[RMDB]
RNA sequence: GGGAACGACUCGAGUAGAGUCGAAAAGCGGGUGUCACGGUGUUCGUGCUGGUGGGGCGGUAUUUCGAGGCGCGCGCCAAGUCGCAGGCGGGCAGUGCGCUGAGUUCCUUGGCGGCGCUGAGCGCCAGCCUGAUUUCAUGUUCGCAUGAAAUCAGGCAAAAGAAACAACAACAACAAC
Reactivity to DMS in 0.01 (KOAc 150mM, MgCl2 10mM, bicine 150mM(pH8.5), 24C), signal-to-noise 5, nucleotides 027 to 126: g010c080g000g020g010u010g010u000c040a070c070g000g010u010g010u010u000c070g020u000g010c070u000g000g020u000g010g020g010g010c090g010g010u000a070u000u010u010c050g000a270g010g000c030g010c030g020c030g000c010c020a030a050g010u010c100g010c080a230g000g020c030g010g010g010c080a060g010u010g000c020g010c010u010g010a120g010u000u000c090c000u000u000g010g010c010g010g020c020g010c050u000g010a110g010c070g010c030c060a090
Reactivity to 2A3 in 0.01 (KOAc 150mM, MgCl2 10mM, bicine 150mM(pH8.5), 24C), signal-to-noise 4, nucleotides 027 to 126: g030c030g020g030g020u090g070u120c040a020c050g010g040u080g100u220u160c050g030u050g060c030u040g030g030u050g000g030g010g010c050g020g030u080a100u050u130u120c040g030a040g000g020c020g000c040g000c000g000c030c000a040a020g040u030c020g020c120a030g040g030c030g030g040g020c060a050g060u100g090c010g000c020u020g010a040g050u070u030c010c000u010u020g020g000c000g010g010c020g010c040u040g030a020g030c020g000c010c010a010